[RMDB]
RNA sequence: GGGAACGACUCGAGUAGAGUCGAAAAGAUAUGGACCGCCAGGCAAGCCGCCACUCGGAAACGAGUGGACCGGUGAUGACCCUGCGGUCCUAAGUCAAAUCUACGCUUGGUUCGCCAAGCGUAGAAACACGUAUAUCCUCUUCGGAGGAUAUACGUGAAAAGAAACAACAACAACAAC
Reactivity to 2A3 in 0.01 (KOAc 150mM, MgCl2 10mM, bicine 150mM(pH8.5), 24C), signal-to-noise 2, nucleotides 027 to 126: g000a000u000a010u040g000g010a000c010c000g090c170c110a010g000g000c020a050a000g010c000c000g020c010c000a000c000u000c000g000g020a030a000a000c020g000a000g020u030g020g000a030c220c070g000g010u020g180a260u020g000a000c010c010c010u000g000c000g000g000u030c000c000u000a000a000g000u010c000a000a010a050u030c000u000a010c000g000c000u000u010g000g040u070u100c210g060c140c000a000a000g000c000g000u010a000g010a000a010a000
Reactivity to DMS in 0.01 (KOAc 150mM, MgCl2 10mM, bicine 150mM(pH8.5), 24C), signal-to-noise 4, nucleotides 027 to 126: g000a010u010a000u010g000g010a010c000c000g000c300c260a010g000g000c000a060a010g010c010c010g010c000c000a010c000u000c000g030g000a000a010a020c000g010a010g010u000g000g010a010c300c040g010g020u010g010a050u010g010a030c300c000c000u000g010c000g000g010u000c000c000u000a000a050g000u000c020a060a070a190u000c000u000a010c000g000c000u000u010g010g010u010u020c300g030c000c010a010a010g020c000g010u000a000g010a030a120a180